[RMDB]
RNA sequence: GGGAACGACUCGAGUAGAGUCGAAAAGCCGUUUCGACGGCGCCCUGGGGGUCUAUAGUGAUGAGGUAUAGACAUGCUCUGAAGCCUCCACGGAGCAACAGCUAUACUCCCCACCAUCCUAUAGACGGAGGCACCCGCAAGGCCUGUUCGCAGGCAAAGAUACCAUGGUAUUCGUACCAUGGUAUCUAAAAGAAACAACAACAACAAC
Reactivity to DMS in 0.01 (KOAc 150mM, MgCl2 10mM, bicine 150mM(pH8.5), 24C), signal-to-noise 2, nucleotides 027 to 156: g040c010c000g030u000u000u020c150g000a050c000g030g000c010g000c030c000c030u020g000g040g000g130g080u000c000u000a030u000a010g010u030g010a060u010g000a260g040g000u000a030u000a020g030a060c050a300u010g040c010u010c010u010g020a110a080g000c030c000u000c000c030a300c090g010g000a000g030c000a060a090c110a160g010c000u000a030u000a010c020u000c300c070c020c040a300c030c010a010u000c020c010u010a000u000a060g000a060c020g000g020a040g030g030c020a060c020c010c040g030c020a070a160g010g040c000c050u000g020u010u010c160g000c010a010g050g000c020a050a040
Reactivity to 2A3 in 0.01 (KOAc 150mM, MgCl2 10mM, bicine 150mM(pH8.5), 24C), signal-to-noise 4, nucleotides 027 to 156: g000c000c000g000u010u050u130c230g100a030c000g000g000c010g030c000c000c010u020g030g000g000g000g000u000c000u000a030u000a000g180u250g170a010u010g020a030g070g020u010a010u010a020g060a080c060a150u200g010c010u000c000u020g050a100a010g000c000c010u000c010c000a040c040g000g000a000g010c050a050a150c070a160g130c010u010a010u010a020c030u160c100c050c010c010a030c000c040a000u000c000c000u000a000u000a010g010a000c020g000g000a000g010g030c010a020c030c030c020g090c120a130a070g120g000c000c000u020g020u080u060c230g010c080a010g000g000c000a060a060